The record gives the reactivity of an RNA of 177 nucleotides to DMS and 2A3.
Reactivities are given for positions 27 through 126.
It was measured as part of the RMDB library RFMREP.
Conditions: 150 mM KOAc, 10 mM MgCl2 and 150 mM bicine (pH 8.5), 24 C.
The DMS profile rests on 1,719 reads.
[RMDB]
RNA sequence: GGGAACGACUCGAGUAGAGUCGAAAAAGUCCCCUCCCAGGCUGCAUUGAUUUGCUAUGGCCGAGUGAGGGGGGCUUCACCUGAGGGUGAGGCCAUCCUAUCCACUUCUGGUGCCGGACACCGGUACGUCUAAAUGGUUGUUCGCAACCAUUUAGACAAAAGAAACAACAACAACAAC
Reactivity to DMS in 0.01 (KOAc 150mM, MgCl2 10mM, bicine 150mM(pH8.5), 24C), signal-to-noise 2, nucleotides 027 to 126: a230g000u010c000c000c000c000u000c010c020c080a220g010g010c010u000g030c010a000u000u010g010a220u010u000u000g020c010u020a110u030g040g020c000c020g000a130g010u000g000a040g010g020g000g000g000g010c010u010u000c010a000c000c000u010g010a110g010g000g030u000g010a010g010g000c000c010a020u000c010c010u000a160u010c120c100a050c090u000u000c110u000g020g030u000g010c010c020g000g000a190c200a100c030c010g000g000u010a020c100
Reactivity to 2A3 in 0.01 (KOAc 150mM, MgCl2 10mM, bicine 150mM(pH8.5), 24C), signal-to-noise 2, nucleotides 027 to 126: a010g090u080c000c000c000c000u000c010c000c000a010g000g000c040u030g000c010a020u050u050g050a130u200u240u090g000c040u070a190u300g040g000c000c040g020a020g020u160g010a000g000g000g000g000g000g000c000u000u020c000a000c000c000u050g130a240g060g070g060u020g000a010g000g000c000c000a010u010c000c010u050a100u020c050c020a130c050u010u040c070u130g050g000u010g000c040c000g050g050a140c080a120c080c000g000g000u030a010c010